Conditions: 150 mM KOAc, 10 mM MgCl2 and 150 mM bicine (pH 8.5), 24 C. Structure probing data (2A3) for a 177-nucleotide construct. The 2A3 profile rests on 636 reads. 2A3 adducts were read by reverse transcription with SuperScript II with manganese.
[RMDB]
RNA sequence: GGGAACGACUCGAGUAGAGUCGAAAAUCAAGCAACCACCGCAUCCAGCAUCAAGCCCACCUGAAAUUGUCUCCGGCUUCCCUCUGGCCGAACGAUAUCGGUAGUUAAUUAAAACUUAGGGUGCAAGACCCACGCAGGUUUUCGAACCUGCGUGGGUAAAAGAAACAACAACAACAAC
Reactivity to 2A3 in 0.01 (KOAc 150mM, MgCl2 10mM, bicine 150mM(pH8.5), 24C), signal-to-noise 1, nucleotides 027 to 126: u090c010a010a000g020c000a010a010c010c030a000c000c010g000c030a080u000c000c020a000g040c000a050u070c000a020a080g020c020c000c000a030c010c000u070g030a130a070a100u010u060g060u010c040u030c090c000g020g020c030u050u020c000c000c020u030c040u000g010g020c030c000g060a040a000c000g000a000u100a160u210c000g030g030u000a010g040u010u070a000a170u160u180a260a190a000a000c030u020u040a050g020g020g020u000g000c020a070a000g020